Chemical mapping of a 177-nucleotide RNA with DMS. The data come from the RNA Mapping Database (RMDB), library OK2TST.

RNA sequence: GGGAACGACUCGAGUAGAGUCGAAAAAAGAGGACAAAUGCUGUUUACCCUGCAACAUCUAAAUGUGGCCCCGCUGUUUUGUCACGUAAUGAUCCAAGACUAGACCCAGACAUUGAUUUUGACAAACUAUCUGGGAUGAUUUCGAUCAUCCCAGAUAAAAAGAAACAACAACAACAAC
Reactivity to DMS in 0.01 (KOAc 150mM, MgCl2 10mM, bicine 150mM(pH8.5), 24C), signal-to-noise 1, nucleotides 027 to 126: a060a080g010a060g000g010a040c050a010a120a060u010g030c020u000g010u000u030u010a110c030c000c000u060g010c060a030a030c080a050u010c090u000a020a060a060u000g010u000g000g010c000c020c030c050g010c080u000g010u010u030u000u000g010u010c030a080c260g010u010a040a070u000g000a040u010c030c000a010a040g030a030c070u020a080g000a150c040c020c030a090g010a050c100a070u010u000g020a050u010u000u000u000g020a080c070a010a050a160c180